[RMDB]
RNA sequence: GGGAACGACUCGAGUAGAGUCGAAAACAAAAUGGGUAGUAGAGUAAAGGCUGUCUCGGUCUCUACUAUCUAUCUCACGCACUACUUGUAGACUAGACUGAGAUAGCCUUUAGUCAUAAGUGGUGUAGGAACACUAUGUAUUCGUACAUGGUGUUCCAAAAGAAACAACAACAACAAC
Reactivity to 2A3 in 0.01 (KOAc 150mM, MgCl2 10mM, bicine 150mM(pH8.5), 24C), signal-to-noise 9, nucleotides 027 to 126: c040a010a100a040a070u130g030g020g010u050a040g020u010a020g020a020g030u080a030a040a020g030g000c010u020g020u060c000u000c030g060g010u010c010u000c010u010a010c000u010a010u000c010u010a040u020c060u030c010a080c080g060c000a030c030u070a010c010u050u030g010u030a040g010a030c040u020a020g010a020c030u030g010a010g000a050u040a010g000c000c000u010u010u000a000g000u000c000a010u020a090a020g030u030g050g010u020g020u030a050
Reactivity to DMS in 0.01 (KOAc 150mM, MgCl2 10mM, bicine 150mM(pH8.5), 24C), signal-to-noise 7, nucleotides 027 to 126: c090a060a060a090a090u040g010g000g030u010a050g010u020a060g000a040g000u020a010a020a010g010g020c010u000g010u000c010u000c000g020g000u000c000u000c050u010a030c020u020a040u010c080u010a020u020c060u010c080a080c170g010c060a070c090u010a020c100u010u010g010u000a020g000a190c300u020a070g010a020c010u000g000a010g010a010u000a000g000c020c000u000u000u000a000g000u010c030a080u030a060a070g000u010g010g020u000g000u000a140